[RMDB]
RNA sequence: GGGAACGACUCGAGUAGAGUCGAAAAGUUGGGGAAUUCGUUCCCCAACACUCAAUAUCUUCCGAAGCCGAACGGGAAAACCGGCAUCUAAAAAUAAAUAAAAGCUCUAUGCUUUCGAGCAUAGAAAGAAUGAUUAGUCGUUCGCGACUAAUCAUUCAAAAGAAACAACAACAACAAC
Reactivity to 2A3 in 0.01 (KOAc 150mM, MgCl2 10mM, bicine 150mM(pH8.5), 24C), signal-to-noise 1, nucleotides 027 to 126: g020u000u020g000g000g000g030a000a020u060u110c180g080u040u010c050c000c000c000a000a000c000a000c000u000c000a000a080u120a200u140c080u090u010c000c020g020a060a000g000c020c000g030a030a000c030g150g000g300a080a300a100a000c050c000g000g030c000a050u020c000u090a130a190a160a250a220u170a090a190a040u210a110a110a070a000g000c000u000c000u000a000u000g000c000u140u030u210c300g090a020g020c000a000u000a000g030a000a030a000
About this RNA
Chemical mapping of a 177-nucleotide RNA with 2A3. Values cover nucleotides 27 to 126. Source: RMDB library M2PK50, as collected in RNAgym. 2A3 is a SHAPE reagent: it acylates the 2'-hydroxyl of flexible nucleotides of all four kinds.